[RMDB]
RNA sequence: GGGAACGACUCGAGUAGAGUCGAAAAAUGCAGGGGCUUUGUUUACUCACAAAAUGGUGCAUAAGGAAAAAGGGGCCAACAAAAUGCACAAGUGUAAAUUCUGUGAAUAUGAGACAGCUGAACAGGGGUUAUUGAAUCGCCACCUCUUGGCAGUCCACAUUAGCCUUUUAUUCGUAAAAGGCUAAUGAAAAGAAACAACAACAACAAC
Reactivity to DMS in 0.01 (KOAc 150mM, MgCl2 10mM, bicine 150mM(pH8.5), 24C), signal-to-noise 2, nucleotides 027 to 156: a060u000g010c030a090g020g030g040g000c020u010u020u010g010u000u000u000a090c020u000c060a160c030a060a070a040a100u000g010g020u010g020c030a070u010a110a210g020g020a030a070a020a100a090g000g000g050g030c030c030a070a060c070a050a070a100a070u000g020c020a030c030a080a070g030u010g020u010a040a070a110u000u010c020u000g020u000g010a050a070u010a060u010g000a130g000a110c020a080g010c020u000g040a020a060c030a110g000g020g040g050u000u000a180u000u020g020a020a080u000c060g030c060c000a050c060c050u010c050u000u000g020g020c020a130g000u000c040c050a120

The record gives the reactivity of an RNA of 207 nucleotides to DMS. It was measured as part of the RMDB library OK3TST. Conditions: 150 mM KOAc, 10 mM MgCl2 and 150 mM bicine (pH 8.5), 24 C.